[RMDB]
RNA sequence: GGGAACGACUCGAGUAGAGUCGAAAAUGCCGACCACCGACCACCCUCCUGUGGGGAAACUAACACACGAACGCGUUUUCGGCUGAGGAGAGGAGUACCGGAGGUAAGGUGUGGUACUCCCAAUUCAAAGAGGCUGUCCGUUACCUAGCUGUAUACCCCGGAGUAUUUUUUUCGAAAAAUACUCCGGAAAAGAAACAACAACAACAAC
Reactivity to 2A3 in 0.01 (KOAc 150mM, MgCl2 10mM, bicine 150mM(pH8.5), 24C), signal-to-noise 1, nucleotides 027 to 156: u060g000c000c000g000a000c070c000a000c000c060g040a020c010c030a030c000c030c000u010c000c000u120g010u230g040g030g040g020a000a000a140c120u070a070a030c040a010c010a000c080g060a130a000c020g000c020g030u020u000u020u020c030g000g000c000u020g020a030g100g000a050g010a010g000g000a000g010u010a010c010c010g010g000a010g020g000u070a100a070g020g070u070g020u020g080g000u020a000c010u070c000c000c000a000a030u050u040c090a000a000a110g060a010g060g000c030u070g030u100c010c020g000u000u020a160c020c010u070a030g040c020u060g040u150a050u250a070c200c040